Background:
Chemical mapping of a 177-nucleotide RNA with DMS and 2A3. Values cover nucleotides 27 to 126. The DMS profile rests on 1,942 reads.

[RMDB]
RNA sequence: GGGAACGACUCGAGUAGAGUCGAAAAUACAUAUCCGCGUGGGGCAUUAUCAUCAAUGCCGUUUUCACCGGGGUACAGUCCGCCGUCGGUGCCGUGGCUGACUUUUUCCGCAACGCGUGGGCGGUUGCACCUGGUGAGCUUUCGAGCUCACCAGGUGAAAAGAAACAACAACAACAAC
Reactivity to DMS in 0.01 (KOAc 150mM, MgCl2 10mM, bicine 150mM(pH8.5), 24C), signal-to-noise 2, nucleotides 027 to 126: u020a070c080a120u000a080u030c000c020g030c160g050u000g020g030g000g030c010a010u000u000a060u000c300a100u010c160a020a000u000g010c000c000g010u000u010u010u010c020a040c010c000g000g010g030g000u020a050c120a070g000u000c000c060g000c000c010g000u000c020g000g010u000g010c100c080g000u000g010g000c050u000g030a070c220u000u000u000u000u000c010c030g010c030a030a050c060g020c090g030u000g000g000g020c040g000g000u000u000g000
Reactivity to 2A3 in 0.01 (KOAc 150mM, MgCl2 10mM, bicine 150mM(pH8.5), 24C), signal-to-noise 1, nucleotides 027 to 126: u040a010c070a020u110a100u130c000c020g030c090g000u030g020g210g020g020c020a020u060u040a100u170c140a010u110c040a030a000u010g000c030c050g060u070u020u040u120c010a010c020c000g020g020g010g020u090a060c030a030g030u000c020c010g040c020c010g090u070c020g140g100u080g080c110c010g010u030g020g020c000u000g010a070c000u080u070u000u050u000c010c000g000c000a020a010c020g000c000g020u080g040g010g090c040g030g020u030u110g040
DMS adducts were read by reverse transcription with MarathonRT.
Source: RMDB library OK2TRN, as collected in RNAgym.
The reactions ran in a buffer of 150 mM KOAc, 10 mM MgCl2 and 150 mM bicine (pH 8.5), at 24 C.
High DMS reactivity at an A or C suggests that its Watson-Crick edge is free.
High 2A3 reactivity points to a flexible backbone, as in loops and unpaired stretches.